[RMDB]
RNA sequence: GGGAACGACUCGAGUAGAGUCGAAAAAUUUGUUGUCGACCGGGCGGACAUAUUAGUAUCUGUUAAAGGGUCGCCGUCUACUCUCAUCGUUCUUUUGUGUACAAAUUUUUUAAAGGAGCGAUGUUGAGAUAAGGGAAACAUUCGUGUUUCCCUUAUCAAAAGAAACAACAACAACAAC
Reactivity to 2A3 in 0.01 (KOAc 150mM, MgCl2 10mM, bicine 150mM(pH8.5), 24C), signal-to-noise 3, nucleotides 027 to 126: a000u130u120u050g010u010u010g020u050c040g010a050c000c010g010g030g090c000g020g020a020c060a040u260a100u120u080a120g150u140a050u060c050u090g070u080u090a120a120a130g070g010g020u010c000g000c030c000g090u020c000u010a030c010u060c030u000c010a020u000c010g000u020u010c000u000u000u000u020g080u000g010u000a010c040a020a180a100u170u230u050u050u160u280a000a020a000g000g000a000g000c010g000a010u020g020u050u070g010a020
Reactivity to DMS in 0.01 (KOAc 150mM, MgCl2 10mM, bicine 150mM(pH8.5), 24C), signal-to-noise 5, nucleotides 027 to 126: a110u020u010u000g010u010u000g010u010c040g000a100c110c070g000g000g010c020g000g000a040c090a090u020a080u020u040a110g020u030a080u010c050u000g000u010u050a050a100a140g000g000g020u010c010g030c050c020g000u000c020u010a100c050u010c020u000c020a020u000c000g020u000u000c000u000u010u000u000g010u020g000u020a120c300a050a050a020u000u010u030u040u010u030a010a020a020g010g010a010g000c000g010a010u000g000u010u000g000a080
Source: RMDB libraries RFM100 and RFMREP, as collected in RNAgym. Structure probing data (2A3 and DMS) for a 177-nucleotide construct. Values cover nucleotides 27 to 126. The RNA was probed in 150 mM KOAc, 10 mM MgCl2 and 150 mM bicine (pH 8.5) at 24 C. 2A3 adducts were read by reverse transcription with SuperScript II with manganese. For DMS the reverse transcriptase was MarathonRT.